[RMDB]
RNA sequence: GGGAACGACUCGAGUAGAGUCGAAAAAGACCGCCGUACGCGGCGGUCAAUCCGAUGAUGAGUCUCGCUCGGCUGAUAGAUGAUGUAGGGCAUACUGGCUGAGGAGAUGCCGCUACGGCGGCAUCAAUAACCUAACCGUGUUCGCACGGUUAGGUUAAAAAGAAACAACAACAACAAC
Reactivity to DMS in 0.01 (KOAc 150mM, MgCl2 10mM, bicine 150mM(pH8.5), 24C), signal-to-noise 1, nucleotides 027 to 126: a040g000a010c000c010g020c000c000g000u060a010c140g060c000g040g070c010g000g000u000c000a000a030u000c030c040g000a140u030g000a000u000g030a130g000u000c060u010c000g000c010u000c000g010g000c010u010g000a260u060a130g020a020u000g020a240u010g000u020a090g020g060g000c060a040u000a070c050u030g010g000c060u010g030a060g000g010a050g000a000u000g000c000c010g030c000u010a130c140g050g010c000g000g000c000a000u000c010a120a120
Reactivity to 2A3 in 0.01 (KOAc 150mM, MgCl2 10mM, bicine 150mM(pH8.5), 24C), signal-to-noise 4, nucleotides 027 to 126: a000g010a010c010c000g000c020c000g000u030a020c300g020c010g100g020c000g000g010u000c000a000a010u010c000c000g080a120u160g020a040u060g060a030g080u020c010u000c060g170c010u010c010g020g020c020u020g030a140u100a180g040a030u070g020a030u120g090u180a090g000g090g000c020a010u060a140c030u050g020g010c000u000g010a000g020g070a050g000a010u020g000c000c000g000c010u030a030c240g100g000c000g010g000c000a000u020c000a000a060